This 177-nucleotide RNA was probed chemically with 2A3 and DMS. 2A3 adducts were read by reverse transcription with SuperScript II with manganese.
[RMDB]
RNA sequence: GGGAACGACUCGAGUAGAGUCGAAAAGGGCGUCAUUUCGAUGACGCCCAUACGUCUACUCGGAUUGGCGAGGACGACGCCGACGGGCGCGUUUGCCAAUCGCACCGUCCAGAUUCGUCUGGACGAAAGUCUCUACUCGAUUCGUCGAGUAGAGACUAAAAGAAACAACAACAACAAC
Reactivity to 2A3 in 0.01 (KOAc 150mM, MgCl2 10mM, bicine 150mM(pH8.5), 24C), signal-to-noise 2, nucleotides 027 to 126: g020g020g010c010g040u010c000a030u060u090u190c180g080a030u010g000a000c000g030c000c000c000a000u010a000c000g040u010c010u030a020c000u010c010g010g000a010u020u010g010g000c020g030a120g090g050a040c020g120a180c010g020c010c000g180a290c160g070g000g000c010g000c000g010u000u030u100g010c000c010a000a030u010c000g010c000a110c000c000g000u000c000c000a000g010a020u000u090c120g080u000c060u000g010g030a010c010g000a000a010
Reactivity to DMS in 0.01 (KOAc 150mM, MgCl2 10mM, bicine 150mM(pH8.5), 24C), signal-to-noise 1, nucleotides 027 to 126: g000g010g030c010g030u000c000a000u000u000u010c230g010a030u010g020a030c000g010c000c000c000a000u010a010c110g000u000c040u000a020c000u010c020g040g000a020u000u010g000g010c010g010a150g000g010a040c010g010a150c010g050c000c000g000a150c300g010g010g010c020g000c060g000u000u000u000g020c000c000a000a010u000c020g020c160a070c130c000g000u000c000c000a000g000a030u000u020c130g010u000c000u000g000g000a020c030g000a000a030
Source: RMDB library M2PK50, as collected in RNAgym. The 2A3 profile rests on 2,702 reads. DMS (dimethyl sulfate) methylates the pairing face of unpaired adenines and cytosines. For DMS, 1,376 sequencing reads were counted. DMS adducts were read by reverse transcription with MarathonRT.